[RMDB]
RNA sequence: GGGAACGACUCGAGUAGAGUCGAAAAUUGAUUCUAGUAAACCAGUCACUAAGAAAUACACUUACUCCUUCUUGCCUAAAGAAGACGGCGAUGUGUUGUUGGCUGAGUUUGACACUUAUGACCCUAUGACGAAACACCUUCGGGUGUUUCAAAAGAAACAACAACAACAAC
Reactivity to DMS in 0.01 (KOAc 150mM, MgCl2 10mM, bicine 150mM(pH8.5), 24C), signal-to-noise 9, nucleotides 027 to 129: u000u000g010a090u030u030c070u000a090g030u030a050a020a010c010c000a010g040u020c010a070c120u050a110a100g000a090a100a030u070a040c020a040c030u010u090a110c050u000c080c020u010u030c010u030u030g040c150c140u030a060a020a030g030a060a010g030a060c300g000g020c040g000a000u000g020u010g000u000u000g000u050u000g010g020c010u010g010a100g030u000u020u010g030a060c090a040c090u020u020a050u050g010a100c000c000c000u000a090u060g040a110c170
Reactivity to 2A3 in 0.01 (KOAc 150mM, MgCl2 10mM, bicine 150mM(pH8.5), 24C), signal-to-noise 8, nucleotides 027 to 129: u060u080g070a050u150u020c040u070a080g020u060a010a000a020c000c010a000g010u010c010a000c070u150a170a090g070a200a170a020u240a000c010a000c030u070u160a090c040u030c020c000u000u020c000u010u050g180c060c120u230a160a070a020g080a010a020g030a030c080g000g020c060g060a060u040g000u000g010u040u030g050u070u040g020g000c000u000g020a030g070u000u020u020g030a010c010a030c030u090u090a040u180g050a060c000c000c000u050a120u130g040a030c060